[RMDB]
This 177-nucleotide RNA was probed chemically with 2A3 and DMS.
For DMS, 1,178 sequencing reads were counted.
For DMS the reverse transcriptase was MarathonRT.
Source: RMDB library OK1LIB, as collected in RNAgym.

RNA sequence: GGGAACGACUCGAGUAGAGUCGAAAAUGAGCUAUCUCCACAGAUCAGAAAUUGGGAAAUUGGAUGAGACAUCACUUCGUGCAGCAUUAAGUCUGACGUGUGCUGGAAUUCGAAAGACGAAUAGAUCGAGCAUCCAAAGGUUCGCCUUUGGAUGCUCAAAAGAAACAACAACAACAAC
Reactivity to 2A3 in 0.01 (KOAc 150mM, MgCl2 10mM, bicine 150mM(pH8.5), 24C), signal-to-noise 2, nucleotides 027 to 126: u100g000a010g050c020u030a040u020c030u000c060c000a060c030a040g040a050u050c000a030g090a130a060a010u100u110g100g020g030a030a090a090u070u020g020g040a000u030g040a020g040a020c010a050u030c000a010c000u040u040c030g060u100g030c030a010g030c000a040u040u200a040a030g040u000c040u040g000a000c020g030u080g000u010g000c040u000g020g030a010a040u000u030c070g030a020a070a070g060a020c060g010a030a090u080a040g130a060u140c070
Reactivity to DMS in 0.01 (KOAc 150mM, MgCl2 10mM, bicine 150mM(pH8.5), 24C), signal-to-noise 1, nucleotides 027 to 126: u000g040a030g000c050u000a070u020c070u000c000c030a080c300a050g000a050u000c100a120g010a110a050a230u000u000g000g000g020a070a130a010u000u000g020g000a010u000g000a030g030a150c060a080u030c020a050c180u020u040c030g040u020g000c020a010g000c080a090u020u040a140a170g000u020c000u000g000a000c020g030u030g000u000g030c020u000g000g040a100a040u000u000c010g000a020a130a050g000a190c120g000a000a020u020a100g000a080u010c080
Annotation:
For 2A3, 1,262 sequencing reads were counted.